[RMDB]
RNA sequence: GGGAACGACUCGAGUAGAGUCGAAAAGACACGACGGAGACGUCGUGUCAAGUCCAGUGCGAAAGCACUGGACAAAUAAGGGCUGUUUUACUCGCUGAAUUUCAGCCCCAAACAAAAAACCUCAGCACAGCCUGAUAAAUUUCGAUUUAUCAGGCUGAAAAGAAACAACAACAACAAC
Reactivity to DMS in 0.01 (KOAc 150mM, MgCl2 10mM, bicine 150mM(pH8.5), 24C), signal-to-noise 2, nucleotides 027 to 126: g000a040c000a010c000g010a030c000g030g000a300g000a300c020g030u010c010g030u010g010u010c000a030a100g020u000c000c000a010g000u000g020c040g040a140a040a240g020c000a020c000u000g000g010a000c010a050a060a150u020a220a180g010g000g030c010u010g010u020u000u000u000a020c040u000c260g020c010u000g000a160a130u000u000u000c010a020g000c010c000c000c170a000a010a220c010a000a010a010a000a020a050c050c190u000c000a000g020c010a260
Reactivity to 2A3 in 0.01 (KOAc 150mM, MgCl2 10mM, bicine 150mM(pH8.5), 24C), signal-to-noise 1, nucleotides 027 to 126: g000a000c000a000c000g000a010c020g000g030a060g020a050c000g000u010c010g010u010g000u000c010a000a000g010u020c000c030a000g000u000g000c010g090a130a010a030g000c010a000c000u000g000g010a010c020a010a020a000u140a060a070g010g010g000c010u000g060u000u020u000u000a080c080u060c080g010c000u000g000a020a030u000u000u000c010a000g000c010c000c020c020a010a020a010c010a000a010a000a000a010a010c040c060u020c010a000g030c010a020